Chemical mapping of a 177-nucleotide RNA with DMS and 2A3.
For DMS, 4,231 sequencing reads were counted.
Values cover nucleotides 27 to 126.
For 2A3 the reverse transcriptase was SuperScript II with manganese.
The 2A3 profile rests on 9,364 reads.

[RMDB]
RNA sequence: GGGAACGACUCGAGUAGAGUCGAAAAGAUAUGGACUGAGCGAUAAGAUUGUAGGUCGGAAACGACCUACAACAAGAUCUUUUGACGCUCUGUCCUAAGUCAAAAGGUUACCGUUCGCGGUAACCAACUGUAUAAGUGCGUUCGCGCACUUAUACAGAAAAGAAACAACAACAACAAC
Reactivity to DMS in 0.01 (KOAc 150mM, MgCl2 10mM, bicine 150mM(pH8.5), 24C), signal-to-noise 4, nucleotides 027 to 126: g000a000u000a140u020g010g000a040c000u000g000a010g030c010g020a120u010a100a100g010a230u000u000g020u000a010g010g020u010c010g020g000a020a020a070c000g020a010c000c000u010a000c000a010a020c140a090a090g000a130u000c090u000u000u010u010g020a190c050g010c000u000c000u000g010u000c000c000u000a020a070g000u010c010a090a070a110a120g000g000u000u000a000c000c000g010u010u000c190g010c000g020g000u000a000a010c000c000a010a030
Reactivity to 2A3 in 0.01 (KOAc 150mM, MgCl2 10mM, bicine 150mM(pH8.5), 24C), signal-to-noise 4, nucleotides 027 to 126: g000a010u020a000u040g000g000a000c010u020g000a020g000c000g060a080u090a290a150g070a170u050u050g000u000a000g000g000u000c000g010g030a020a010a000c010g010a000c000c010u010a000c000a000a000c010a010a020g120a120u230c070u120u300u100u180g050a010c010g000c000u000c000u030g000u000c010c000u000a030a000g010u000c020a000a030a090a160g020g010u010u010a000c030c000g010u030u070c300g000c020g090g000u000a010a000c010c000a010a000